[RMDB]
RNA sequence: GGGAACGACUCGAGUAGAGUCGAAAAGGGCACGCCGGGUGGGAUGGGUAAACCGGGCGGGCAACUGCGGGUAUUCCCCGGGUAGUCUUAACUCCUCUUUCGUCGGGCCAUCUGGGUUUUAAAUACGUAGCUUGAGUAGAUUCGUCUACUCAAGCUAAAAAGAAACAACAACAACAAC
Reactivity to DMS in 0.01 (KOAc 150mM, MgCl2 10mM, bicine 150mM(pH8.5), 24C), signal-to-noise 1, nucleotides 027 to 126: g000g020g020c040a040c140g000c030c010g030g000g000u000g000g000g000a190u010g000g000g030u000a050a110a080c070c020g010g010g000c100g000g010g010c140a050a050c130u000g000c040g040g000g040u010a100u020u000c150c020c050c070g000g000g010u000a050g000u030c060u000u010a060a080c080u000c030c040u000c080u000u000u000c040g000u010c150g010g010g050c020c030a030u020c070u000g000g010g010u000u000u030u010a030a060a100u010a080c120g010
Structure probing data (DMS) for a 177-nucleotide construct. For DMS, 888 sequencing reads were counted. DMS adducts were read by reverse transcription with MarathonRT.